Notes: The record gives the reactivity of an RNA of 177 nucleotides to 2A3 and DMS. It was measured as part of the RMDB library 15KREP.

RNA sequence: GGGAACGACUCGAGUAGAGUCGAAAAGUCUUUGUCAAUUGAGGAGUUUGCUGACGUAGUAAAGGAACAAGUCUCAGACUUGCUUGUUAAAUUACUGCGUGGAAUGCCGAUUCCAGAUUUUGAUUUAGACUAAUACGUACUUCGGUACGUAUUAGUCAAAAGAAACAACAACAACAAC
Reactivity to 2A3 in 0.01 (KOAc 150mM, MgCl2 10mM, bicine 150mM(pH8.5), 24C), signal-to-noise 5, nucleotides 027 to 126: g020u010c020u090u110u090g020u000c010a000a010u000u030g010a010g020g000a020g010u000u030u030g020c020u040g040a000c010g000u010a000g000u000a000a040a060g110g060a050a000c010a020a000g040u000c040u020c140a070g040a170c040u050u050g000c010u020u000g000u020u040a080a090a020u020u000a010c000u000g010c010g000u010g000g200a100a040u060g000c010c000g000a000u000u000c000c000a060g070a300u010u020u000u010g010a020u090u010u130a030
Reactivity to DMS in 0.01 (KOAc 150mM, MgCl2 10mM, bicine 150mM(pH8.5), 24C), signal-to-noise 4, nucleotides 027 to 126: g010u000c000u000u010u000g020u000c000a010a030u000u000g000a300g010g000a020g000u000u000u000g020c000u000g000a030c010g010u000a000g000u010a000a020a080g020g010a030a000c000a010a010g010u000c120u000c170a120g000a050c130u000u000g000c010u000u000g010u000u000a060a060a110u000u000a000c010u000g000c000g020u010g020g010a050a040u000g010c010c060g000a020u000u000c000c010a080g000a150u000u000u000u000g000a030u000u000u010a100

The 2A3 profile rests on 7,305 reads.